RNA sequence: GGGAACGACUCGAGUAGAGUCGAAAACUCAAUGACUUCGGUCAUUGAGAAAGGACAAAAGUCCAACUGAGCAGCUAAGAGCUCAUACAUCGUCAUAGCAAAAAACACACACGUUCGCGUGUGUGAACCAAACAUCUCCGUUCGCGGAGAUGUUUGGAAAAGAAACAACAACAACAAC
Reactivity to 2A3 in 0.01 (KOAc 150mM, MgCl2 10mM, bicine 150mM(pH8.5), 24C), signal-to-noise 1, nucleotides 027 to 126: c000u000c000a020a000u000g010a010c010u000u050c240g060g010u000c010a000u000u010g010a010g000a050a050a010g020g010a020c020a050a300a080a090g000u030c000c020a000a020c070u050g020a050g010c010a000g040c000u030a110a000g020a010g000c000u040c010a020u160a060c030a040u100c080g150u040c010a050u030a020g000c030a010a040a010a050a100a000c020a010c000a020c000a010c020g000u040u050c300g030c010g080u030g010u010g000u000g000a000a020